[RMDB]
This 207-nucleotide RNA was probed chemically with 2A3 and DMS. The reactions ran in a buffer of 150 mM KOAc, 10 mM MgCl2 and 150 mM bicine (pH 8.5), at 24 C. As a SHAPE reagent, 2A3 marks flexible, mostly unpaired nucleotides at the ribose 2'-OH. For 2A3 the reverse transcriptase was SuperScript II with manganese. The DMS profile rests on 2,117 reads.
RNA sequence: GGGAACGACUCGAGUAGAGUCGAAAAGGGGUCGGACCGACGAUCAGGCAUACUCAUCGAUCUAUACUGAAGCCUCCACGGUAUAGGGAGAGUGGGCCUGGGAGGUCCGACGGAGGCACCCAAAACUACGACAAGAGAUUCGUCUCUUGUCGUAGAAGCAUGCAUUUGUAUUCGUACAAAUGCAUGCAAAAGAAACAACAACAACAAC
Reactivity to 2A3 in 0.01 (KOAc 150mM, MgCl2 10mM, bicine 150mM(pH8.5), 24C), signal-to-noise 6, nucleotides 027 to 156: g030g020g080g020u010c000g000g000a000c010c000g130a290c020g000a020u000c000a000g000g000c000a010u010a020c000u000c010a140u300c080g000a000u000c000u000a000u000a000c000u030g040a080a010g000c000c000u000c000c000a010c010g010g000u000a000u000a000g000g000g000a020g000a000g010u020g010g000g000c000c000u000g000g000g000a010g000g000u000c000c000g000a000c000g000g000a000g000g000c000a030c000c000c010a030a100a030a050c000u000a000c000g000a000c000a000a000g000a000g000a020u030u130c250g130u000c110u000c000u000u000g000u000c000g000u000a000g000a000a000
Reactivity to DMS in 0.01 (KOAc 150mM, MgCl2 10mM, bicine 150mM(pH8.5), 24C), signal-to-noise 1, nucleotides 027 to 156: g040g040g010g020u020c020g040g010a080c000c000g030a050c170g000a120u000c040a030g020g020c000a100u000a000c060u020c000a220u000c200g030a070u020c010u010a010u000a010c020u020g000a080a120g000c030c000u000c020c030a300c060g000g040u010a030u000a020g000g000g000a020g000a030g060u000g000g010g040c010c000u000g000g000g010a040g010g020u000c000c020g010a010c030g000g010a070g130g070c000a090c020c020c030a100a100a120a300c000u000a010c010g000a020c000a020a010g000a000g020a050u000u030c300g020u000c010u000c000u000u000g020u000c000g020u010a000g000a050a160